[RMDB]
RNA sequence: GGGAACGACUCGAGUAGAGUCGAAAAGUAUGGAUGCCACCGUGACGGCUCAAUCACACAAGUGCCAACGAUAACGAGGCGCUCGCUAUUGCUGCGUAACUGACGGCCUGAAGGUCUGACGUUACAAAAAACGAAAAGUGGUUCGCCACUUUUCGAACAUACAACGGAUCUUCGGAUCCGUUGUAUGAAAAGAAACAACAACAACAAC
Reactivity to DMS in 0.01 (KOAc 150mM, MgCl2 10mM, bicine 150mM(pH8.5), 24C), signal-to-noise 3, nucleotides 027 to 156: g010u000a040u000g010g000a110u000g010c010c030a130c030c020g010u000g010a130c100g000g020c040u000c050a060a140u020c000a050c100a080c050a090a090g110u000g030c020c040a060a110c070g010a140u000a110a160c020g010a250g030g000c060g050c020u000c040g000c030u000a100u010u010g000c000u000g000c010g000u000a040a030c000u020g020a300c300g010g010c010c010u040g040a210a110g040g020u000c010u000g000a300c300g010u000u010a070c060a010a020a060a050a080a130c010g000a010a000a000a010g010u000g020g020u000u010c300g010c030c000a000c010u000u020u010u000c000g020a040a130
Reactivity to 2A3 in 0.01 (KOAc 150mM, MgCl2 10mM, bicine 150mM(pH8.5), 24C), signal-to-noise 5, nucleotides 027 to 156: g080u060a070u160g050g050a060u090g020c010c020a060c060c050g040u050g070a050c050g030g000c020u040c080a060a100u150c030a030c020a020c030a150a060g010u030g040c020c020a100a040c090g080a110u110a230a040c060g010a070g040g000c020g010c030u020c000g000c040u080a080u200u240g030c040u070g000c040g020u010a010a000c010u020g020a010c010g010g010c000c010u250g150a300a090g000g010u000c010u010g010a000c010g000u010u000a000c000a000a030a010a000a000a000c010g010a000a000a000a000g000u000g030g030u040u060c160g040c040c010a000c000u000u000u000u010c000g010a020a000